[RMDB]
RNA sequence: GGGAACGACUCGAGUAGAGUCGAAAAGUGACGCAAUUCAAGUAGCCAAGUGCUAUGGGGAGUCUGUGUUAGUUAAUGCUGCUAACACACAUCUUAAGCAUGGCGGUGGUAUCGCUGGUGCUAUUAACGUAUUAUGGCGGUUCGCCGCCAUAAUACGAAAAGAAACAACAACAACAAC
Reactivity to DMS in 0.01 (KOAc 150mM, MgCl2 10mM, bicine 150mM(pH8.5), 24C), signal-to-noise 2, nucleotides 027 to 126: g000u000g010a050c060g050c070a070a110u000u000c090a090a120g020u000a100g030c020c010a080a160g000u010g010c000u000a040u010g020g000g050g010a060g000u000c110u010g030u000g000u000u000a000g000u000u000a030a130u000g010c270u000g020c000u000a010a020c000a010c000a010c140a030u000c000u000u000a080a060g010c020a050u000g000g020c020g000g000u010g010g030u010a060u000c020g020c040u010g010g020u000g020c050u000a210u030u020a060a130
Reactivity to 2A3 in 0.01 (KOAc 150mM, MgCl2 10mM, bicine 150mM(pH8.5), 24C), signal-to-noise 2, nucleotides 027 to 126: g060u020g020a020c070g010c080a030a050u090u050c020a090a030g060u000a000g030c030c010a210a050g090u090g120c000u020a020u020g040g030g020g060a060g020u030c000u010g000u000g000u000u000a020g010u020u090a180a050u260g110c080u000g000c010u040a000a000c000a000c000a010c010a110u000c020u030u070a020a000g000c000a000u000g050g000c050g000g000u050g050g150u130a020u040c020g000c030u010g060g040u030g010c000u030a060u130u120a130a030